[RMDB]
Chemical mapping of a 177-nucleotide RNA with DMS and 2A3. 2A3 adducts were read by reverse transcription with SuperScript II with manganese. Conditions: 150 mM KOAc, 10 mM MgCl2 and 150 mM bicine (pH 8.5), 24 C. For DMS the reverse transcriptase was MarathonRT. Source: RMDB library RFMREP, as collected in RNAgym. The 2A3 profile rests on 5,701 reads.

RNA sequence: GGGAACGACUCGAGUAGAGUCGAAAAUUCCGCUGAUGACUUCUGUCAGUGCCACGUGUCUGGGCCACUGAGACCACAUGAUGGGAUUGAGGACCUGAGGAAAGACGCAGAAGCUUCGGCUUCUGCGCUCGGAUAUUUAGUUCGCUAAAUAUCCGAGAAAAGAAACAACAACAACAAC
Reactivity to DMS in 0.01 (KOAc 150mM, MgCl2 10mM, bicine 150mM(pH8.5), 24C), signal-to-noise 5, nucleotides 027 to 126: u000u000c010c010g000c060u000g010a090u000g000a100c080u010u000c050u000g000u000c020a030g020u000g010c030c030a060c080g010u000g000u000c120u000g010g020g000c040c030a100c100u000g000a120g000a080c040c030a050c050a060u000g000a090u010g010g000g000a080u000u000g000a140g000g000a070c190c030u000g000a100g000g000a070a080a070g010a270c000g020c000a010g000a020a010g000c000u000u010c240g030g010c000u000u000c010u000g000c000g010
Reactivity to 2A3 in 0.01 (KOAc 150mM, MgCl2 10mM, bicine 150mM(pH8.5), 24C), signal-to-noise 4, nucleotides 027 to 126: u040u000c010c010g030c030u040g020a080u040g020a060c050u050u030c040u150g160u050c020a020g020u020g100c000c010a050c030g060u040g040u040c100u090g010g000g030c040c010a070c090u160g040a090g020a090c010c010a020c020a080u160g050a160u030g060g010g040a030u030u070g030a040g020g030a040c010c030u030g020a050g010g060a130a050a030g040a010c010g000c000a000g000a010a000g000c000u020u050c150g100g000c000u010u000c000u000g000c000g010